[RMDB]
RNA sequence: GGGAACGACUCGAGUAGAGUCGAAAAGAGGCAGACCUGACUUGGUGCCUGUGUAUGACAAUUAGGCCUGUGUCCAACCAACAAAACCCCAUAUUCUCCUGCACCCCAUGUGCUGUGCCACAAUUUGUAGUUUGAGAUUUCAUUUAACAGCCUCCAAAAAAUGAUGGCAUUUCGAUGCCAUCAUUUUAAAAGAAACAACAACAACAAC
Reactivity to DMS in 0.01 (KOAc 150mM, MgCl2 10mM, bicine 150mM(pH8.5), 24C), signal-to-noise 1, nucleotides 027 to 156: g000a100g060g050c010a070g000a030c020c020u000g010a070c090u000u000g010g030u000g000c020c010u000g000u000g000u000a020u000g010a120c100a100a100u000u000a050g020g040c020c000u000g040u000g020u020c020c030a090a110c040c050a060a140c070a050a060a060a090c010c000c020c050a100u000a080u010u010c030u000c000c000u000g010c060a130c030c040c020c050a140u010g010u000g000c020u000g030u010g040c030c020a070c060a070a150u000u000u000g040u010a040g010u000u000u000g010a050g010a100u000u000u000c020a080u000u000u000a050a130c010a070g010c000c010u000c000c020a000a020
Reactivity to 2A3 in 0.01 (KOAc 150mM, MgCl2 10mM, bicine 150mM(pH8.5), 24C), signal-to-noise 2, nucleotides 027 to 156: g070a000g000g030c020a010g030a040c010c000u030g120a120c050u070u080g030g020u080g040c000c040u040g000u010g010u030a170u100g080a050c110a170a070u140u110a040g000g010c000c010u020g010u000g030u050c000c030a040a030c060c000a030a060c040a030a150a040a070c020c020c020c010a050u050a170u140u000c030u010c000c010u030g010c030a160c020c010c000c030a080u050g020u010g020c050u060g070u060g060c040c000a000c010a060a040u000u030u200g060u000a060g010u000u010u070g050a060g000a030u080u090u120c050a060u040u080u070a040a010c010a000g000c000c000u020c030c010a110a110